Conditions: 150 mM KOAc, 10 mM MgCl2 and 150 mM bicine (pH 8.5), 24 C. This 177-nucleotide RNA was probed chemically with 2A3 and DMS. The DMS profile rests on 869 reads.
RNA sequence: GGGAACGACUCGAGUAGAGUCGAAAACUUUUGGAGAGUUUGAUCCUGGCUCAGGACGAACGCUGGCGGCGUGCCUAAUACAUGCAAGUCGAGCGAAUCAGAUGGGAGCUUGCUCCCGGAUGAUUAGGCUCCCGUACAUGUUCGCAUGUACGGGAGCAAAAGAAACAACAACAACAAC
Reactivity to 2A3 in 0.01 (KOAc 150mM, MgCl2 10mM, bicine 150mM(pH8.5), 24C), signal-to-noise 1, nucleotides 027 to 126: c030u090u040u030u300g120g070a090g000a060g090u060u120u090g050a100u060c000c010u020g180g000c060u080c140a020g010g010a040c030g000a140a040c020g060c060u030g070g000c060g010g050c050g030u030g030c010c030u110a130a020u120a090c060a020u120g060c080a090a000g050u030c040g050a040g060c020g010a010a020u000c000a010g020a020u040g000g000g000a000g000c070u070u110g030c000u030c090c000c000g000g010a010u010g010a000u010u020a050g050
Reactivity to DMS in 0.01 (KOAc 150mM, MgCl2 10mM, bicine 150mM(pH8.5), 24C), signal-to-noise 1, nucleotides 027 to 126: c010u000u010u010u010g010g050a200g020a120g000u000u000u010g000a120u000c030c000u010g010g000c080u030c040a070g010g030a120c100g020a030a060c050g010c010u010g000g040c020g000g000c030g000u020g010c030c050u000a040a160u000a150c040a020u000g020c090a060a110g040u010c070g000a030g030c040g010a020a000u000c000a000g010a300u010g000g010g010a010g010c030u010u000g040c000u000c000c000c000g000g000a300u000g000a040u000u000a020g000
It was measured as part of the RMDB library OK2TRN. DMS adducts were read by reverse transcription with MarathonRT. 2A3 adducts were read by reverse transcription with SuperScript II with manganese.